[RMDB]
RNA sequence: GGGAACGACUCGAGUAGAGUCGAAAAGGUGUACUCACUGUUCUUACUGUCAAAUGCACUGUAACAUCCAUGUUACUUUGAUACAUGCUCUUGGAUUUGCAUUCUUGUUCAACUGUCUCCGUUCUUUCUAUAUAAUUUGCCACUGGUCCCAUCCUGACCCCUCCAUCAGUUUCGACUGAUGGAGGGGAAAAGAAACAACAACAACAAC
Reactivity to 2A3 in 0.01 (KOAc 150mM, MgCl2 10mM, bicine 150mM(pH8.5), 24C), signal-to-noise 1, nucleotides 027 to 156: g000g010u000g000u050a050c050u070c090a040c010u020g050u150u050c020u100u190a040c040u030g000u070c040a000a000a150u110g020c050a000c040u010g120u110a030a000c040a050u120c020c040a220u200g000u010u020a050c000u080u060u070g070a070u050a100c040a040u060g000c010u000c010u140u050g070g000a050u010u010u120g050c020a020u000u110c000u120u110g030u110u030c050a080a060c050u050g010u100c080u000c030c000g040u050u000c010u080u090u000c030u040a010u010a010u010a150a090u000u000u140g010c000c000a050c040u030g000g040u000c000c020c020a020u060c060c000u030g020a060
Conditions: 150 mM KOAc, 10 mM MgCl2 and 150 mM bicine (pH 8.5), 24 C. Chemical mapping of a 207-nucleotide RNA with 2A3. The 2A3 profile rests on 514 reads.